[RMDB]
Chemical mapping of a 207-nucleotide RNA with 2A3.
RNA sequence: GGGAACGACUCGAGUAGAGUCGAAAAUGCAAUAUUCUGGCCUGCCCACUCCAAGUUGAGAGUUGGACCGUGGGGCUUGGGCGAAGGCCCUUGUCUCUCGGCCCCUAAACUGGAGGGCAAAGCGUGAGGCUGGUUUCACAGAGCAGCGAAUACCUCUACCAUUCCGUAUCUUCGGAUACGGAAUGGUAAAAGAAACAACAACAACAAC
Reactivity to 2A3 in 0.01 (KOAc 150mM, MgCl2 10mM, bicine 150mM(pH8.5), 24C), signal-to-noise 1, nucleotides 027 to 156: u060g000c000a000a210u040a100u200u070c050u040g030g020c000c020u020g020c000c000c010a080c030u020c000c000a100a110g000u000u030g090a100g000a020g070u290u110g030g010a190c010c010g000u000g000g000g000g000c000u010u000g000g000g000c040g050a030a050g290g010c000c000c000u000u010g000u000c000u000c000u030c000g040g010c000c000c000c000u060a020a020a000c000u000g010g000a060g000g000g000c050a020a070a030g030c170g020u140g050a070g000g050c000u020g030g070u100u070u150c070a070c010a090g020a000g070c060a010g040c030g000a070a070u050a120c020c010u100c010u000